RNA sequence: GGGAACGACUCGAGUAGAGUCGAAAAGAUUCUGACCCUCGACACCAUCCGAGAGGAAGCCGACCGCGAGUACGGCGCGCCGGUUCAGGUGCAGAUCUCCAAGGACACAACCGUGUCCCUCAAGAACGUGAUGCGCCUCCGCAAAGACGUGCGCAAAGCUCUACGAUAUGUUCGCAUAUCGUAGAGCAAAAGAAACAACAACAACAAC
Reactivity to 2A3 in 0.01 (KOAc 150mM, MgCl2 10mM, bicine 150mM(pH8.5), 24C), signal-to-noise 2, nucleotides 027 to 156: g050a010u200u130c050u110g100a120c000c030c010u020c020g010a050c040a050c110c040a090u120c060c030g020a020g000a000g020g070a020a000g020c000c010g060a080c060c000g070c010g050a040g110u160a060c020g050g000c010g030c040g000c000c040g000g000u040u140c090a030g000g010u070g080c000a040g020a020u030c000u000c030c000a030a020g000g000a000c000a000c000a130a160c250c160g020u000g000u000c030c010c010u100c030a070a040g020a090a040c090g000u070g130a060u040g020c000g000c000c020u040c010c000g030c020a070a150a000g080a020c050g080u110g000c020g010c060a040a040a040